RNA sequence: GGGAACGACUCGAGUAGAGUCGAAAAGCCGGUCACGACUUUGUCCUGCUCGGCGAACGCGGCCAGGGCAAGACCCGGCUGCUGCGCGCACUCGCGGGUCUGCUGGACGAGUGGACGCCGGUGAUCGCUAGAUUCAAUCGUUCGCGAUUGAAUCUAGAAAAGAAACAACAACAACAAC
Reactivity to 2A3 in 0.01 (KOAc 150mM, MgCl2 10mM, bicine 150mM(pH8.5), 24C), signal-to-noise 4, nucleotides 027 to 126: g030c020c000g000g030u110c070a020c080g100a040c130u080u080u300g020u020c000c020u020g000c010u020c040g040g000c060g040a160a040c080g000c060g140g040c040c030a180g060g000g020c110a140a030g010a130c010c000c000g040g040c000u010g000c000u060g050c080g000c030g000c030a050c080u080c050g170c030g080g040g030u020c040u060g000c030u060g020g000a010c010g000a010g000u060g000g060a030c050g000c000c000g020g010u020g010a040u100c070g000
Reactivity to DMS in 0.01 (KOAc 150mM, MgCl2 10mM, bicine 150mM(pH8.5), 24C), signal-to-noise 4, nucleotides 027 to 126: g040c020c000g000g010u010c110a240c090g000a050c030u000u010u010g010u000c000c020u010g020c030u000c060g010g000c020g010a050a070c150g020c070g010g020c060c010a090g000g010g020c030a140a060g010a210c020c010c020g000g000c100u000g000c040u000g020c150g010c100g020c060a090c100u010c060g020c010g000g010g020u000c070u010g010c090u000g010g010a060c040g000a020g000u000g000g020a140c280g000c000c010g000g020u010g000a040u000c040g000
Chemical mapping of a 177-nucleotide RNA with 2A3 and DMS. 2A3 adducts were read by reverse transcription with SuperScript II with manganese. The 2A3 profile rests on 4,311 reads.